Conditions: 150 mM KOAc, 10 mM MgCl2 and 150 mM bicine (pH 8.5), 24 C. The record gives the reactivity of an RNA of 177 nucleotides to 2A3 and DMS. 2A3 adducts were read by reverse transcription with SuperScript II with manganese.
RNA sequence: GGGAACGACUCGAGUAGAGUCGAAAACUGAUGCAGAAGAUAUGCAAUUUAAAGGUCAUGAUGAUGAUUCAUCAUCUAAAGAAGAACCUGCGAAAGAGGAAGCGCCAGCAGAGCAAGCACCUGUAGCGCAUGUAUGUGCUUUCGAGCACAUACAUGCAAAAGAAACAACAACAACAAC
Reactivity to 2A3 in 0.01 (KOAc 150mM, MgCl2 10mM, bicine 150mM(pH8.5), 24C), signal-to-noise 1, nucleotides 027 to 126: c020u030g040a120u090g000c010a020g000a300a020g050a210u130a060u150g040c000a040a070u000u210u300a300a150a020g070g000u020c080a110u060g020a000u010g000a000u030g090a160u250u120c010a020u000c000a000u000c010u050a080a140a040g110a170a030g020a020a060c000c020u000g010c020g110a110a080a050g110a030g030g010a090a070g030c070g000c020c000a020g080c050a030g060a020g000c020a040a000g000c020a050c050c010u040g000u110a030g040c070
Reactivity to DMS in 0.01 (KOAc 150mM, MgCl2 10mM, bicine 150mM(pH8.5), 24C), signal-to-noise 1, nucleotides 027 to 126: c010u000g030a140u010g000c050a050g010a130a080g000a130u000a050u020g010c010a080a080u010u000u010a060a150a060g010g010u000c060a100u000g010a010u000g020a010u000g050a220u000u000c070a000u010c000a000u000c010u020a070a100a080g000a090a080g020a180a110c060c010u020g020c120g010a000a050a120g010a070g050g000a180a110g010c100g010c010c020a090g000c060a050g010a100g030c030a060a050g030c080a080c070c010u000g010u010a090g010c220
Values cover nucleotides 27 to 126. The data come from the RNA Mapping Database (RMDB), library OK2TRN.